[RMDB]
RNA sequence: GGGAACGACUCGAGUAGAGUCGAAAAGGCCUCACCUGGGGUUGAUCUCCAGCGUGGGCUGCAGGAGCUGUGCGCGCUCCUCCUGGGUCUUGGCCAGCUGCUGCAUGCGCAGGAAGUGGCGGGCAGCUCCCUCUAGAACGUUCGCGUUCUAGAGGGAAAAAGAAACAACAACAACAAC
Reactivity to 2A3 in 0.01 (KOAc 150mM, MgCl2 10mM, bicine 150mM(pH8.5), 24C), signal-to-noise 2, nucleotides 027 to 126: g030g000c000c000u080c030a000c000c000u000g030g000g040g000u080u260g160a110u100c000u000c010c000a030g000c020g070u010g010g000g010c020u040g010c030a050g030g040a010g020c010u060g020u170g150c100g000c010g010c070u000c000c030u000c000c000u070g020g060g030u020c050u140u150g090g010c020c020a100g040c160u190g000c020u030g010c010a080u150g060c130g000c030a020g040g070a130a000g060u060g120g000c040g000g030g030c010a020g030c000
Reactivity to DMS in 0.01 (KOAc 150mM, MgCl2 10mM, bicine 150mM(pH8.5), 24C), signal-to-noise 3, nucleotides 027 to 126: g020g010c020c010u010c020a010c020c000u000g010g000g000g010u000u010g010a150u010c000u000c000c000a010g000c220g040u000g010g000g020c020u000g010c180a100g000g000a010g010c010u010g010u010g000c020g020c030g010c030u000c070c040u000c010c010u010g010g010g020u010c100u010u010g020g010c020c070a170g000c130u000g010c040u000g000c100a030u010g010c030g000c010a030g010g010a080a050g010u000g010g010c000g020g000g010c000a040g000c020

Overview: This 177-nucleotide RNA was probed chemically with 2A3 and DMS. The DMS profile rests on 5,594 reads. Conditions: 150 mM KOAc, 10 mM MgCl2 and 150 mM bicine (pH 8.5), 24 C.